[RMDB]
Conditions: 150 mM KOAc, 10 mM MgCl2 and 150 mM bicine (pH 8.5), 24 C. Structure probing data (DMS and 2A3) for a 177-nucleotide construct. Reactivities are given for positions 27 through 126. For DMS, 1,054 sequencing reads were counted. For 2A3 the reverse transcriptase was SuperScript II with manganese. It was measured as part of the RMDB library M2PK50. The 2A3 profile rests on 1,168 reads.
RNA sequence: GGGAACGACUCGAGUAGAGUCGAAAAAACUACUUCUUCGGAAGUAGUUAUUGCGUGGGUCUAAUAAGCCCAAGGUGCCAGGUUCGACCCUUGCUGGCCGCAUCACCGACCGAUUCGUCGGUCGGAACGGGUACUAGAGUUUCGACUCUAGUACCCGAAAAGAAACAACAACAACAAC
Reactivity to DMS in 0.01 (KOAc 150mM, MgCl2 10mM, bicine 150mM(pH8.5), 24C), signal-to-noise 1, nucleotides 027 to 126: a020a010c000u000a020c000u000u000c000u000u010c180g020g020a010a020g010u000a010g000u000u000a010u000u000g010c110g030u010g000g000g020u000c010u020a140a090u000a120a200g010c000c000c000a040a050g000g010u020g010c030c000a030g000g010u000u000c080g000a190c000c010c000u000u010g000c000u000g000g000c010c000g000c090a060u030c220a130c000c000g000a030c000c000g000a030u010u000c200g000u000c000g020g020u020c020g000g000a020a050
Reactivity to 2A3 in 0.01 (KOAc 150mM, MgCl2 10mM, bicine 150mM(pH8.5), 24C), signal-to-noise 1, nucleotides 027 to 126: a020a000c010u020a020c010u010u000c000u050u060c300g070g010a000a000g000u010a000g010u000u020a150u070u110g000c000g010u020g000g010g000u000c000u000a070a040u110a260a000g040c020c010c020a020a030g140g040u050g040c000c000a000g050g050u040u120c060g100a160c010c000c010u020u110g010c000u010g010g000c000c000g000c010a090u170c010a010c020c000g010a000c000c000g000a020u000u080c200g040u000c000g090g020u020c010g020g020a010a020